RNA sequence: GGGAACGACUCGAGUAGAGUCGAAAAUGUGACAUGUUCGCAUGUCACAAGCCUGGUAGUUCCUAUCUCAAUUACCUGUACAGGCCAUGGUCUGGAUAGGAAAGCUCUACCUAUUCGUAGGUAGAAAUAUUAGCUAAAUCUUCGGAUUUAGCUAAUAAAAAGAAACAACAACAACAAC
Reactivity to DMS in 0.01 (KOAc 150mM, MgCl2 10mM, bicine 150mM(pH8.5), 24C), signal-to-noise 7, nucleotides 027 to 126: u000g010u000g000a010c000a010u000g000u010u010c200g030c010a010u000g000u000c000a000c000a030a070g000c020c020u000g010g010u010a100g000u000u000c000c000u000a040u010c070u010c110a120a120u010u010a090c010c000u000g010u000a050c040a020g000g010c040c040a080u010g060g010u000c080u010g000g000a010u000a000g010g010a060a080a120g010c170u000c000u000a010c000c000u000a030u000u010c140g020u000a000g000g000u000a000g000a020a090a090
Reactivity to 2A3 in 0.01 (KOAc 150mM, MgCl2 10mM, bicine 150mM(pH8.5), 24C), signal-to-noise 3, nucleotides 027 to 126: u060g000u000g010a000c000a000u010g020u040u070c270g010c120a000u010g000u030c000a000c000a000a010g020c010c010u070g090g080u090a070g040u030u010c010c010u040a090u070c060u000c080a100a300u220u150a130c010c000u000g030u060a040c020a050g050g000c010c010a160u270g040g020u000c040u030g020g000a010u010a000g010g000a040a050a000g020c010u000c000u000a000c000c000u010a030u020u060c240g040u020a000g000g010u000a000g000a010a030a000